This 177-nucleotide RNA was probed chemically with 2A3 and DMS. It was measured as part of the RMDB libraries RFM100 and RFMREP. For 2A3, 1,511 sequencing reads were counted. High DMS reactivity at an A or C suggests that its Watson-Crick edge is free. For DMS the reverse transcriptase was MarathonRT. For 2A3 the reverse transcriptase was SuperScript II with manganese. High 2A3 reactivity points to a flexible backbone, as in loops and unpaired stretches.
RNA sequence: GGGAACGACUCGAGUAGAGUCGAAAACAGUGUUUGGCAGAGGUGUAUGGAGUGAGAGAAGGGAAAGGGUAUUUUCCGAUUCUGUCGUUACUCUCUUCCCUCUCUCAUUCCAUACAUCGUCUGACGAUAGCCAUUUCUAGUUCGCUAGAAAUGGCUAAAAAGAAACAACAACAACAAC
Reactivity to 2A3 in 0.01 (KOAc 150mM, MgCl2 10mM, bicine 150mM(pH8.5), 24C), signal-to-noise 2, nucleotides 027 to 126: c050a030g070u040g030u110u070u070g060g000c000a000g000a010g030g000u000g000u000a000u010g000g000a010g000u000g000a000g000a020g060a130a280g000g010g000a030a010a000g010g010g030u000a040u090u120u080u070c050c010g010a050u140u090c070u270g100u080c000g000u000u010a000c000u000c000u000c080u010u010c010c010c000u000c020u000c000u000c000a000u000u000c000c000a000u000a030c000a000u010c000g000u000c000u000g000a000c030g010a010
Reactivity to DMS in 0.01 (KOAc 150mM, MgCl2 10mM, bicine 150mM(pH8.5), 24C), signal-to-noise 3, nucleotides 027 to 126: c060a140g000u020g010u010u010u000g010g020c000a000g010a120g010g020u000g000u000a000u000g020g010a010g020u000g000a000g000a010g000a090a080g010g020g010a010a030a030g000g010g000u010a020u020u000u010u010c290c030g020a040u000u040c200u040g000u010c010g000u020u000a020c010u000c000u000c160u000u000c000c010c000u000c000u000c000u010c000a000u000u000c000c000a000u010a000c010a000u000c010g040u010c000u000g000a060c050g000a140